The record gives the reactivity of an RNA of 177 nucleotides to 2A3 and DMS. The RNA was probed in 150 mM KOAc, 10 mM MgCl2 and 150 mM bicine (pH 8.5) at 24 C. DMS adducts were read by reverse transcription with MarathonRT. 2A3 adducts were read by reverse transcription with SuperScript II with manganese. Values cover nucleotides 27 to 126. Source: RMDB library OK2TRN, as collected in RNAgym.
[RMDB]
RNA sequence: GGGAACGACUCGAGUAGAGUCGAAAAGGAUGCAACGUAGUAAUAUGUGUGACAACUAGCUCUUGAGUUACACAUUACUAGUCGUAAUGCGAUUCAAGAGCUAUAUCGCGUUACGACAUCUGUAUCGCUACAACAGACUAUUCGUAGUUUGUUGUAGAAAAGAAACAACAACAACAAC
Reactivity to 2A3 in 0.01 (KOAc 150mM, MgCl2 10mM, bicine 150mM(pH8.5), 24C), signal-to-noise 6, nucleotides 027 to 126: g030g000a000u000g000c000a020a010c030g040u030a020g020u000a010a040u090a290u300g030u000g000u060g130a300c100a010a000c000u030a050g000c000u000c000u000u010g000a000g000u010u050a000c000a000c000a000u000u000a000c000u010a010g000u000c000g000u000a000a000u000g000c000g000a000u020u020c010a010a000g010a010g020c000u010a020u010a000u040c000g010c000g000u000u000a000c000g000a000c000a020u060c060u000g010u000a010u010c000g000
Reactivity to DMS in 0.01 (KOAc 150mM, MgCl2 10mM, bicine 150mM(pH8.5), 24C), signal-to-noise 8, nucleotides 027 to 126: g000g000a000u000g010c020a030a130c300g010u000a010g010u000a010a020u000a150u000g010u000g000u000g000a300c300a010a010c080u000a300g000c000u000c000u000u000g000a060g010u000u000a030c010a010c010a010u000u000a000c000u000a060g010u000c020g000u000a000a000u000g000c010g010a010u000u000c010a000a010g000a010g010c010u000a020u000a000u000c000g010c010g010u000u000a000c000g010a020c010a040u010c100u000g010u000a010u000c020g000